An RNA of 177 nucleotides, treated with DMS and read out base by base. Values are in units of 0.01, from 0 to 300, in steps of 10. The RNA was probed in 150 mM KOAc, 10 mM MgCl2 and 150 mM bicine (pH 8.5) at 24 C. It was measured as part of the RMDB library TTRINS.
RNA sequence: GGGAACGACUCGAGUAGAGUCGAAAAGAUAUGGAUCAUGUUUCGAGGUAGCGAGGGAUUCCUACUCGGAAACGAGUAGGAAUCCUACCCACCGCUACUACCCACCGAGUCAGCAUGAUCCUAAGUCCCUUACGGGAAAGUUCGCUUUCCCGUAAGGAAAAGAAACAACAACAACAAC
Reactivity to DMS in 0.01 (KOAc 150mM, MgCl2 10mM, bicine 150mM(pH8.5), 24C), signal-to-noise 2, nucleotides 027 to 126: g000a190u020a180u000g000g000a000u040c000a010u000g020u010u000u000c100g000a130g020g020u000a000g000c000g000a180g000g020g000a040u000u000c000c010u000a020c020u000c020g050g000a160a060a250c020g020a010g020u000a000g030g000a020a000u000c000c010u010a000c060c020c080a300c190c000g000c030u000a000c000u000a020c090c080c050a300c160c000g000a020g050u010c290a070g020c040a000u000g000a020u000c000c020u020a050a150g000u020c070